[RMDB]
RNA sequence: GGGAACGACUCGAGUAGAGUCGAAAAGAAAGAAAGAAAGAAAGGUAUGAAGUCCUAUUCACGCAUGAUAGGAUAAACUUCAUAUUGAUCGUGUAUGUGCUAACGCACAUACACGAAUGCGCAUGCAGAACUGCAUGCAUGAACAUAAUGUGUGCAAAGCUAAAUCACUGUUCGCAGUGAUUUAGCUAAAAGAAACAACAACAACAAC
Reactivity to DMS in 0.01 (KOAc 150mM, MgCl2 10mM, bicine 150mM(pH8.5), 24C), signal-to-noise 1, nucleotides 027 to 156: g010a300a080a090g030a090a100a070g000a090a130a030g010a050a150a300g000g020u030a010u000g010a030a020g020u000c020c000u000a010u000u000c030a170c220g000c060a080u020g040a010u010a020g000g010a100u000a030a080a140c000u000u000c020a030u000a020u000u000g000a170u000c030g070u000g070u000a000u000g000u060g000c010u000a150a200c300g010c020a000c010a000u000a010c010a010c000g030a000a020u000g000c050g000c020a070u000g000c000a090g020a060a190c220u000g000c100a020u010g000c000a030u010g000a080a000c170a130u000a120a110u010g010u000g000u000g000c060a060a090
Reactivity to 2A3 in 0.01 (KOAc 150mM, MgCl2 10mM, bicine 150mM(pH8.5), 24C), signal-to-noise 4, nucleotides 027 to 156: g040a020a020a010g070a030a090a020g070a010a120a020g060a090a090a020g020g000u020a020u000g000a000a010g020u000c000c010u010a010u020u110c140a050c100g050c040a050u070g000a000u020a000g010g010a010u140a090a090a010c000u000u010c020a000u000a000u050u080g030a030u030c010g000u000g010u000a000u000g000u030g010c070u140a170a080c160g000c000a000c000a000u000a000c000a010c000g000a020a010u040g010c000g000c000a010u020g000c010a000g050a300a100c190u020g000c000a000u000g000c010a010u110g040a030a020c060a050u170a150a060u120g050u000g010u030g050c060a130a160

Structure probing data (DMS and 2A3) for a 207-nucleotide construct. For 2A3, 3,325 sequencing reads were counted. For DMS the reverse transcriptase was MarathonRT. The data come from the RNA Mapping Database (RMDB), library OK3TST. For 2A3 the reverse transcriptase was SuperScript II with manganese.